[RMDB]
RNA sequence: GGGAACGACUCGAGUAGAGUCGAAAAAUAUAAAGUCUUCAUGCGGAUCUAAGAUAAAGAGUUUCUUUAAAACUCCCGACGUCAUUGCUAGGUACUUCUCUUCUAUUGAUGAAGGGACAAGUGGUGAGGUUGACGUUAACAAUGAGUGUGCGGACAAAUCAUAGUGUUAGUUCGCUAACACUAUGAUAAAAGAAACAACAACAACAAC
Reactivity to DMS in 0.01 (KOAc 150mM, MgCl2 10mM, bicine 150mM(pH8.5), 24C), signal-to-noise 3, nucleotides 027 to 156: a160u000a130u000a090a060a120g000u000c010u000u000c040a100u010g040c040g060g020a110u000c050u010a080a100g000a130u000a040a070a130g010a090g010u000u000u000c080u020u010u010a080a030a040a060c040u000c010c020c020g020a080c020g040u000c010a030u010u010g040c020u010a100g060g030u010a020c050u000u010c010u000c020u000u000c000u000a300u030u010g020a150u000g020a040a030g000g010g040a020c090a090a040g010u000g010g000u000g010a060g020g030u010u000g010a070c050g030u000u000a040a070c060a050a070u000g000a060g020u000g010u000g000c030g020g000a050c060a050a100
Reactivity to 2A3 in 0.01 (KOAc 150mM, MgCl2 10mM, bicine 150mM(pH8.5), 24C), signal-to-noise 7, nucleotides 027 to 156: a000u200a000u050a040a130a010g020u000c010u040u020c020a030u060g020c030g110g000a090u030c060u180a150a050g050a180u140a130a130a010g050a010g000u040u040u000c050u060u160u100a060a140a030a020c010u010c000c030c050g040a020c010g020u000c010a030u020u130g070c020u040a040g080g120u040a050c020u040u000c010u000c000u010u000c000u030a160u170u300g120a180u170g000a050a010g020g010g010a020c050a070a040g010u050g050g180u060g030a060g030g020u040u050g010a010c010g010u010u030a060a060c040a060a100u130g020a040g070u040g000u030g020c040g010g010a020c030a020a110

About this RNA:
This 207-nucleotide RNA was probed chemically with DMS and 2A3. The RNA was probed in 150 mM KOAc, 10 mM MgCl2 and 150 mM bicine (pH 8.5) at 24 C. For DMS the reverse transcriptase was MarathonRT.